[RMDB]
RNA sequence: GGGAACGACUCGAGUAGAGUCGAAAAAGGCAGGAGGCUAGCGGAUUGGGGGGAAGAAAAGCCGAAAUGGAUUCCCGGGUUCAUGGAUGGAAGAGAAGGGAGUUUCGAAUUCCUGCAGCUCGGUCUGACGCCUAAUUACAUUCGUGUAAUUAGGCGUAAAAGAAACAACAACAACAAC
Reactivity to DMS in 0.01 (KOAc 150mM, MgCl2 10mM, bicine 150mM(pH8.5), 24C), signal-to-noise 6, nucleotides 027 to 126: a090g000g020c060a050g000g020a070g000g010c050u010a080g010c080g010g010a130u020u010g010g000g000g000g000g000a090a070g010a070a040a100a070g000c020c030g010a060a100a070u030g010g010a140u010u000c030c010c020g010g010g000u000u010c040a060u020g000g010a120u020g010g010a090a100g000a100g000a090a100g000g000g000a070g000u010u010u010c070g010a080a120u010u000c010c010u010g020c100a070g010c030u010c050g000g000u020c020u010g010
Reactivity to 2A3 in 0.01 (KOAc 150mM, MgCl2 10mM, bicine 150mM(pH8.5), 24C), signal-to-noise 4, nucleotides 027 to 126: a000g130g000c030a010g000g060a010g030g000c030u060a040g020c030g040g020a050u070u100g010g010g000g030g020g000a090a000g060a020a110a010a000g050c010c000g040a080a030a060u150g040g010a020u060u060c010c000c010g030g020g000u020u040c040a040u040g010g040a020u050g010g060a070a020g000a030g020a030a050g010g020g030a030g030u040u040u080c050g020a070a050u050u010c000c020u020g010c020a010g000c020u030c020g010g070u030c030u030g010